[RMDB]
RNA sequence: GGGAACGACUCGAGUAGAGUCGAAAAAAAAAAAGAUAUGGAUGUAGACGCCAUAUGGAGAAGCUGGAUCGGAAACGAUCCAGACUUCUAUGAAGUAUGGCCACUCUACAUCCUAAGUCAAAAAAAAUCAUAAGUUAGACUUCGGUCUAACUUAUGAAAAAGAAACAACAACAACAAC
Reactivity to DMS in 0.01 (KOAc 150mM, MgCl2 10mM, bicine 150mM(pH8.5), 24C), signal-to-noise 1, nucleotides 027 to 126: a000a000a100a210a040a060a100g000a000u000a300u000g000g010a000u000g000u000a000g020a010c180g000c000c000a000u000a000u000g000g000a030g020a000a000g020c000u000g010g000a000u000c000g030g000a110a060a130c000g000a020u010c000c000a000g010a020c000u000u000c020u000a160u010g000a180a200g000u000a000u000g000g000c000c040a070c200u010c000u000a000c000a000u000c000c010u000a010a030g000u000c000a000a000a040a040a270a080a130a200